An RNA of 177 nucleotides, treated with 2A3 and DMS and read out base by base. Values are in units of 0.01, from 0 to 300, in steps of 10. For DMS, 3,535 sequencing reads were counted. The data come from the RNA Mapping Database (RMDB), library OK2TRN. For DMS the reverse transcriptase was MarathonRT.
[RMDB]
RNA sequence: GGGAACGACUCGAGUAGAGUCGAAAAUAAGAAAAUAAGGGUUCCUGGCAUGAUUGAACUAUGGAAGACCUUGUCUCAAACAAUGCUGCUGCCCCACUUCUAAAGGGUUGGUGGAGGCAUCACCCAGUGAUAAUGUCUUCUUCGGAAGACAUUAUCAAAAAGAAACAACAACAACAAC
Reactivity to 2A3 in 0.01 (KOAc 150mM, MgCl2 10mM, bicine 150mM(pH8.5), 24C), signal-to-noise 3, nucleotides 027 to 126: u100a010a010g040a030a050a000a050u120a020a030g060g020g010u010u030c010c030u010g050g000c020a100u070g060a110u250u190g070a130a040c000u040a130u170g050g030a080a030g080a140c010c000u010u010g050u040c040u020c070a120a160a070c030a020a110u060g020c020u000g010c010u040g000c030c030c010c000a030c050u130u010c030u110a180a170a030g210g010g010u150u150g010g030u060g000g070a150g050g030c010a040u050c010a030c000c000c000a020g050
Reactivity to DMS in 0.01 (KOAc 150mM, MgCl2 10mM, bicine 150mM(pH8.5), 24C), signal-to-noise 4, nucleotides 027 to 126: u010a060a070g000a070a050a050a050u010a040a030g000g010g010u000u000c000c010u000g000g030c060a090u000g010a200u000u010g010a090a080c030u000a020u010g020g010a050a030g020a060c010c010u000u000g010u000c040u000c040a110a130a060c090a040a040u000g010c120u000g000c050u000g010c030c010c010c040a030c050u010u000c080u030a100a130a180g000g010g000u010u010g040g010u010g020g000a070g010g000c010a020u000c030a110c020c020c010a160g000